An RNA of 177 nucleotides, treated with 2A3 and DMS and read out base by base. Reactivities are given for positions 27 through 126. It was measured as part of the RMDB library OK2TRN. The RNA was probed in 150 mM KOAc, 10 mM MgCl2 and 150 mM bicine (pH 8.5) at 24 C. 2A3 adducts were read by reverse transcription with SuperScript II with manganese.

RNA sequence: GGGAACGACUCGAGUAGAGUCGAAAACAGGGUAGAUGGCACAACUCGCACAGAGAACUAAUUGGUUGUUCUCUUGGAAAUAAUGAUAUACACAUCUUGUGGAAAUUUCACUGCCCAUAAUUGUGAGAUGAAGUGAAGGGUUCGCCCUUCACUUCAUAAAAGAAACAACAACAACAAC
Reactivity to 2A3 in 0.01 (KOAc 150mM, MgCl2 10mM, bicine 150mM(pH8.5), 24C), signal-to-noise 1, nucleotides 027 to 126: c060a080g040g020g040u010a080g010a250u160g090g000c090a010c000a150a150c020u110c120g110c010a010c040a030g030a000g000a000a000c000u030a010a130u290u190g220g000u130u120g010u010u000c000u010c000u000u050g040g060a000a070a000u160a010a070u070g040a020u040a000u170a160c050a010c010a040u170c120u130u060g030u000g000g050a030a120a090u070u070u010c020a010c030u030g030c010c000c000a050u200a050a150u100u150g080u110g040a160g050
Reactivity to DMS in 0.01 (KOAc 150mM, MgCl2 10mM, bicine 150mM(pH8.5), 24C), signal-to-noise 2, nucleotides 027 to 126: c070a070g000g020g010u000a030g020a110u000g010g000c030a070c110a050a120c200u010c140g020c070a100c160a010g010a070g010a000a000c000u000a070a280u010u030g000g010u000u010g020u000u000c000u000c000u040u000g020g000a120a030a050u000a120a070u010g000a050u000a110u000a140c080a030c050a060u000c190u010u000g000u000g000g000a040a060a150u000u000u000c000a070c020u000g000c030c000c040a070u000a020a070u000u000g000u000g000a100g000